[RMDB]
RNA sequence: GGGAACGACUCGAGUAGAGUCGAAAAGAGCGACUGUGGCUCGUCGGCGCGAUGGUGUUGAUCGUCGGCUUCAUCCUGACGAUCACGUACGGAUCGGUCGGACUCGGGAUCUCCAUGGUAGACGACGCCAUCGUACUGGAUUCGUCCAGUACGAUGGAAAAGAAACAACAACAACAAC
Reactivity to 2A3 in 0.01 (KOAc 150mM, MgCl2 10mM, bicine 150mM(pH8.5), 24C), signal-to-noise 4, nucleotides 027 to 126: g040a000g010c040g080a070c080u080g020u100g160g010c020u000c030g020u020c010g020g000c100g000c020g100a030u060g020g090u080g020u130u130g020a020u020c000g000u000c000g000g000c010u160u120c040a100u100c020c020u040g010a000c000g010a010u000c030a010c030g020u040a060c040g030g090a040u020c010g000g030u010c040g020g020a030c040u010c030g020g040g020a080u000c050u000c070c020a040u060g060g000u080a050g000a120c080g000a010c030g020
Reactivity to DMS in 0.01 (KOAc 150mM, MgCl2 10mM, bicine 150mM(pH8.5), 24C), signal-to-noise 4, nucleotides 027 to 126: g000a120g030c040g010a090c110u010g000u000g010g010c020u000c030g030u010c030g040g010c050g010c040g010a070u000g010g010u000g000u010u010g000a030u000c010g010u000c010g010g010c240u000u020c220a060u000c300c010u010g020a020c000g010a030u010c000a040c050g000u010a100c110g000g000a040u010c030g010g030u010c030g010g010a110c090u000c060g000g000g000a140u000c070u000c040c040a050u010g000g020u000a060g000a160c060g010a080c180g020

An RNA of 177 nucleotides, treated with 2A3 and DMS and read out base by base. Source: RMDB library OK2TST, as collected in RNAgym. The RNA was probed in 150 mM KOAc, 10 mM MgCl2 and 150 mM bicine (pH 8.5) at 24 C.